An RNA of 207 nucleotides, treated with 2A3 and read out base by base. 2A3 adducts were read by reverse transcription with SuperScript II with manganese. Conditions: 150 mM KOAc, 10 mM MgCl2 and 150 mM bicine (pH 8.5), 24 C.

RNA sequence: GGGAACGACUCGAGUAGAGUCGAAAAAUCAUCUGGAGAAUCCACAACAGACGAGACUCCGGAACCAAUUACUGAUAAAGAAGAAGAUCAUACAGUAACAGACACUGUCUCAUACACUACAGUAAGUACAUCAUCUGGAAUUGUCACUACUAAAUCAGCCUCAAUUGUGGUUCGCCACAAUUGAGGCAAAAGAAACAACAACAACAAC
Reactivity to 2A3 in 0.01 (KOAc 150mM, MgCl2 10mM, bicine 150mM(pH8.5), 24C), signal-to-noise 1, nucleotides 027 to 156: a000u000c010a000u040c000u010g000g010a000g040a110a000u080c010c050a070c090a170a170c060a110g140a060c020g000a030g000a000c000u000c000c000g000g000a000a030c030c000a020a070u110u020a060c030u020g050a050u110a170a120a010g000a010a010g030a000a000g050a060u060c030a000u040a050c030a000g040u010a060a050c000a020g010a000c040a000c100u070g030u030c010u000c030a100u150a150c090a060c100u100a030c030a000g000u060a160a010g000u000a020c000a060u060c000a000u000c230u110g000g020a030a030u020u050g000u060c000a010c080u050a010c000u100a140a000a070u000c040a030